[RMDB]
RNA sequence: GGGAACGACUCGAGUAGAGUCGAAAAAGCGAUGAUACGUCGUCGCAACGAUUGCCUGAUCGUAAAACAGGAGACGGCCGUGGCCGCGACCACGUAAAAAAGCGUAACGUGGUCUACGGACCACGAAAAAAGCGCGGAACGUUCGCGUUCCGCGCAACAAAACGUGAUCGUUCGCGAUCACGUUUUGAAAAGAAACAACAACAACAAC
Reactivity to 2A3 in 0.01 (KOAc 150mM, MgCl2 10mM, bicine 150mM(pH8.5), 24C), signal-to-noise 1, nucleotides 027 to 156: a000g000c010g000a000u020g000a000u020a100c200g120u020c000g000u000c000g000c030a040a020c000g000a000u010u040g000c000c010u020g010a050u000c020g080u130a040a000a030a000c000a040g090g000a010g130a070c130g060g010c070c010g010u000g000g000c020c000g000c000g000a010c000c000a000c030g020u040a050a020a000a020a000a000g060c010g000u030a050a000c000g000u000g000g010u030c010u050a060c130g020g010a080c000c000a020c000g020a050a000a000a000a000a010g000c020g020c020g000g050a000a000c000g020u090u130c200g000c020g130u010u000c000c000g000c000g010c000a000a000

Conditions: 150 mM KOAc, 10 mM MgCl2 and 150 mM bicine (pH 8.5), 24 C. This 207-nucleotide RNA was probed chemically with 2A3. Values cover nucleotides 27 to 156. 2A3 adducts were read by reverse transcription with SuperScript II with manganese.